[RMDB]
RNA sequence: GGGAACGACUCGAGUAGAGUCGAAAAGGAAUUCCGCGGACGGCAUGGGCGAGGUGUACGCCCAGUUGUAUGCCACCGACGCCCAAGCCCUGGAUGCGCGGCUGAACGCCUUGGUGGCCACGGUGUGCUCGCUCAGGCCGUUCGCGGCCUGAGCGAGAAAAGAAACAACAACAACAAC
Reactivity to 2A3 in 0.01 (KOAc 150mM, MgCl2 10mM, bicine 150mM(pH8.5), 24C), signal-to-noise 1, nucleotides 027 to 126: g020g000a300a130u110u070c000c000g000c030g000g060a000c040g000g020c000a190u060g020g010g000c290g000a030g020g010u100g010u190a000c000g020c000c020c000a000g000u100u190g030u060a190u080g030c010c000a000c000c000g000a130c070g000c020c000c010a000a000g000c000c000c000u000g270g040a160u080g200c300g150c160g060g000c000u000g000a100a000c000g000c000c000u000u130g020g020u040g000g000c000c000a020c020g090g000u060g000u000g030